The record gives the reactivity of an RNA of 177 nucleotides to 2A3 and DMS. For 2A3 the reverse transcriptase was SuperScript II with manganese. High 2A3 reactivity points to a flexible backbone, as in loops and unpaired stretches. For 2A3, 670 sequencing reads were counted. Source: RMDB library RFM100, as collected in RNAgym. The reactions ran in a buffer of 150 mM KOAc, 10 mM MgCl2 and 150 mM bicine (pH 8.5), at 24 C.
RNA sequence: GGGAACGACUCGAGUAGAGUCGAAAAUGAACGUGGCUACUGUGCCAGCUGGUGGAUCGCUCGGCUUGAGAGCUGAAGAAGGACGUGCCAAGCUGCGAUAAGCCUCAGGGACCCGCACGGAGGGGAAACGCUUACUGGUGUUCGCACCAGUAAGCGUAAAAGAAACAACAACAACAAC
Reactivity to 2A3 in 0.01 (KOAc 150mM, MgCl2 10mM, bicine 150mM(pH8.5), 24C), signal-to-noise 1, nucleotides 027 to 126: u060g010a000a000c000g050u020g000g000c000u010a000c030u180g060u110g040c110c000a000g000c000u010g000g000u030g090g090a180u000c050g000c000u010c000g060g040c000u020u120g300a210g030a000g070c030u030g020a170a000g090a120a000g280g000a050c000g150u200g000c000c000a060a000g040c000u000g000c080g110a040u030a050a000g010c000c000u140c010a000g000g000g170a110c000c080c000g040c010a070c070g000g060a000g010g040g000g010a020a100
Reactivity to DMS in 0.01 (KOAc 150mM, MgCl2 10mM, bicine 150mM(pH8.5), 24C), signal-to-noise 1, nucleotides 027 to 126: u020g030a080a180c140g010u000g060g050c000u000a140c290u020g020u090g010c020c020a000g040c050u000g000g000u000g040g000a060u000c090g080c000u000c010g000g030c000u080u120g000a200g040a100g030c000u080g030a040a040g020a020a090g000g000a000c160g030u090g000c020c020a000a200g010c020u000g040c000g000a090u010a050a100g010c000c000u000c020a210g020g000g050a070c000c000c040g000c070a010c110g020g020a190g000g000g000g050a040a110